[RMDB]
Source information
Chemical mapping of a 177-nucleotide RNA with 2A3 and DMS. 2A3 adducts were read by reverse transcription with SuperScript II with manganese.
RNA sequence: GGGAACGACUCGAGUAGAGUCGAAAAUGCUGGUGCUCGCCACGUGGUCCAAGUGGCGUGCCUAUGGCGCCGGAGGCAUGUACCAGGUGUGGAUAACGCUCGCCAACGGCGAGAACAUAGCGGCUGAACCGUACCGAGAUUUCGAUCUCGGUACGGUAAAAGAAACAACAACAACAAC
Reactivity to 2A3 in 0.01 (KOAc 150mM, MgCl2 10mM, bicine 150mM(pH8.5), 24C), signal-to-noise 1, nucleotides 027 to 126: u100g000c020u020g010g200u110g020c000u000c000g000c010c000a020c000g060u110g040g150u080c100c000a130a030g000u000g020g000c030g020u000g000c000c020u040a040u040g030g000c000g040c000c020g030g010a000g000g000c040a070u100g040u060a050c020c010a050g090g170u170g070u040g080g030a050u070a220a020c040g000c060u020c120g000c060c010a080a070c010g000g030c020g000a040g030a030a010c010a000u060a020g020c020g040g020c030u040g030a050
Reactivity to DMS in 0.01 (KOAc 150mM, MgCl2 10mM, bicine 150mM(pH8.5), 24C), signal-to-noise 2, nucleotides 027 to 126: u000g010c010u010g020g000u000g000c000u000c020g020c010c000a010c010g020u000g010g000u020c040c050a120a110g010u000g000g000c000g030u000g010c020c030u000a030u000g000g010c010g000c010c010g010g010a300g000g020c030a040u000g030u010a090c100c170a140g000g040u010g000u000g000g060a170u000a130a090c130g010c100u000c090g000c000c000a030a240c110g000g010c020g020a070g000a110a050c050a060u010a020g030c070g020g000c020u000g010a110
For 2A3, 1,174 sequencing reads were counted.